RNA sequence: GGGAACGACUCGAGUAGAGUCGAAAAGAUAUGGAUUGUGAACUACGAAAUGUCACGUCGACGAUCGUACUCUCUUCGGAAACGAAGAGAGUACGGGAGACGAAGUCAUUUCGCACAAUCCUAAGUCGUAUCAUAACAGCUUCGGCUGUUAUGAUACAAAAGAAACAACAACAACAAC
Reactivity to DMS in 0.01 (KOAc 150mM, MgCl2 10mM, bicine 150mM(pH8.5), 24C), signal-to-noise 2, nucleotides 027 to 126: g000a130u000a300u020g000g000a000u000u000g020u000g000a080a070c240u020a300c040g000a010a010a000u000g000u000c010a240c010g020u000c010g000a080c300g020a070u010c000g000u010a000c000u000c000u000c030u000u000c000g020g020a100a080a230c020g010a000a000g020a030g010a010g000u000a000c000g010g000g030a100g020a030c000g000a100a070g030u000c000a000u000u000u000c000g020c000a000c000a010a000u000c020c000u020a010a070g010u000c040
Reactivity to 2A3 in 0.01 (KOAc 150mM, MgCl2 10mM, bicine 150mM(pH8.5), 24C), signal-to-noise 2, nucleotides 027 to 126: g120a040u170a060u250g030g000a020u010u010g000u000g080a190a120c180u210a050c300g000a010a000a010u030g020u060c030a010c130g000u000c010g090a300c040g010a060u040c000g010u000a000c000u000c010u000c010u000u000c010g030g010a040a120a070c010g000a000a030g010a000g010a000g000u000a000c000g000g000g010a030g000a000c000g020a050a020g030u030c010a020u000u010u010c010g000c000a000c000a000a010u000c000c000u020a130a030g060u060c100
Structure probing data (DMS and 2A3) for a 177-nucleotide construct. Conditions: 150 mM KOAc, 10 mM MgCl2 and 150 mM bicine (pH 8.5), 24 C. For 2A3 the reverse transcriptase was SuperScript II with manganese. Values are in units of 0.01, from 0 to 300, in steps of 10. Source: RMDB library TTRINS, as collected in RNAgym. DMS adducts were read by reverse transcription with MarathonRT. Reactivities are given for positions 27 through 126.